[RMDB]
RNA sequence: GGGAACGACUCGAGUAGAGUCGAAAAACACACUAAGAAAUACAAAGAGGGAAGUAUGACUGCUAUGACAGCAAAAACAAGCAAAUAUCUCCAGAGGGGAUUAGUCACAUUGCUUCAAAGUUAACAAUGAUGUUUUAUUUUUCGAAAUAAAACAUCAAAAAGAAACAACAACAACAAC
Reactivity to 2A3 in 0.01 (KOAc 150mM, MgCl2 10mM, bicine 150mM(pH8.5), 24C), signal-to-noise 7, nucleotides 027 to 126: a000c060a000c010a000c040u120a100a060g080a060a160a040u180a080c060a040a150a000g060a040g050g060g020a070a000g020u040a040u110g060a070c020u020g030c020u070a090u240g090a080c060a030g040c030a050a090a030a010a030c040a040a000g020c000a040a030a070u100a030u030c020u020c010c010a040g080a110g180g020g000g000a010u030u040a000g020u010c010a010c010a090u030u080g010c010u030u050c020a080a120a080g040u080u100a050a020c020a040a070
Reactivity to DMS in 0.01 (KOAc 150mM, MgCl2 10mM, bicine 150mM(pH8.5), 24C), signal-to-noise 7, nucleotides 027 to 126: a090c090a070c150a070c130u020a080a110g010a100a120a070u030a060c090a070a070a100g000a080g000g000g010a060a060g020u010a040u000g000a050c040u000g000c030u010a050u010g010a070c120a060g010c140a040a070a060a070a080c150a040a050g000c030a030a070a050u020a030u000c030u010c010c020a200g010a140g020g010g000g010a020u000u000a030g000u000c060a050c170a050u000u000g000c020u000u000c110a040a090a100g020u000u010a050a060c150a060a130